[RMDB]
RNA sequence: GGGAACGACUCGAGUAGAGUCGAAAACCACUGCUCGAGGACUCCUUCUCUUCCCGCUCGGGAUUUCUUCGUCUCGGACCGGCUCAUCUUCGGCAAAGGGCGGCGGUCCUCAGUGCUCUUACUCUUUACACUGAUAAGUUCGCUUAUCAGAAAAGAAACAACAACAACAAC
Reactivity to 2A3 in 0.01 (KOAc 150mM, MgCl2 10mM, bicine 150mM(pH8.5), 24C), signal-to-noise 9, nucleotides 027 to 129: c010c010a060c080u050g010c000u020c040g010a030g010g040a070c020u040c000c000u090u040c030u010c000u030u050c000c010c010g040c030u050c030g040g010g020a040u060u060u030c050u070u080c060g100u010c020u010c010g050g040a090c020c020g020g000c010u020c030a120u020c030u110u100c030g040g000c040a090a060a060g020g010g010c020g020g010c040g000g000u000c000c000u000c000a030g010u020g040c000u010c010u100u110a110c020u010c000u040u070u040a070c130a020
Reactivity to DMS in 0.01 (KOAc 150mM, MgCl2 10mM, bicine 150mM(pH8.5), 24C), signal-to-noise 9, nucleotides 027 to 129: c060c030a130c100u050g000c030u000c040g030a020g010g000a080c100u040c120c050u010u030c040u000c040u010u010c080c000c020g000c120u030c070g020g020g010a090u020u030u030c100u020u020c090g000u000c030u030c080g080g000a150c090c040g020g000c030u030c060a060u050c060u060u050c040g000g040c060a020a070a120g030g020g030c140g030g020c160g030g030u000c000c030u020c000a070g030u030g050c020u030c090u020u010a070c020u030c030u020u010u030a130c210a080

This 170-nucleotide RNA was probed chemically with 2A3 and DMS. For 2A3, 88,341 sequencing reads were counted. Conditions: 150 mM KOAc, 10 mM MgCl2 and 150 mM bicine (pH 8.5), 24 C. The data come from the RNA Mapping Database (RMDB), library 15KLIB. Values cover nucleotides 27 to 129.